[RMDB]
RNA sequence: GGGAACGACUCGAGUAGAGUCGAAAAUGUCCCGGGUCACAGAGCUGAAAGGGCAGGUACAACAGGUGACAUGCCGGGCUGUCUGAGUUUAUGAGGGCCCAGUCUUGUGUCUGCCGGGCAAUGAGCAGCUGUAGGUAGAAUUCGUUCUACCUACAGCAAAAGAAACAACAACAACAAC
Reactivity to 2A3 in 0.01 (KOAc 150mM, MgCl2 10mM, bicine 150mM(pH8.5), 24C), signal-to-noise 3, nucleotides 027 to 126: u120g120u110c020c010c000g000g020g020u070c030a010c010a050g050a050g050c020u080g080a170a070a040g060g010g020c010a000g010g030u050a020c020a190a020c030a160g000g170u110g180a070c020a060u110g020c010c000g010g010g040c010u050g100u060c020u030g130a190g170u130u200u110a100u150g010a050g000g020g000c020c000c010a000g020u030c010u060u040g000u010g000u020c010u060g040c000c020g020g000g000c020a050a110u130g040a070g070c040a010
Reactivity to DMS in 0.01 (KOAc 150mM, MgCl2 10mM, bicine 150mM(pH8.5), 24C), signal-to-noise 5, nucleotides 027 to 126: u000g000u010c000c010c000g010g010g010u010c030a070c060a060g010a190g010c020u000g010a090a110a180g020g010g010c010a010g000g010u000a030c030a120a110c170a140g000g010u010g000a060c100a050u000g020c010c010g010g000g010c020u000g000u010c010u010g000a180g020u010u020u000a050u020g010a040g010g010g010c000c000c010a080g000u000c090u010u000g010u000g010u000c020u010g010c010c020g000g010g000c050a080a090u010g010a170g020c150a150
Source: RMDB library OK2TST, as collected in RNAgym. An RNA of 177 nucleotides, treated with 2A3 and DMS and read out base by base. High DMS reactivity at an A or C suggests that its Watson-Crick edge is free. For 2A3, 3,905 sequencing reads were counted. Reactivities are given for positions 27 through 126. The RNA was probed in 150 mM KOAc, 10 mM MgCl2 and 150 mM bicine (pH 8.5) at 24 C.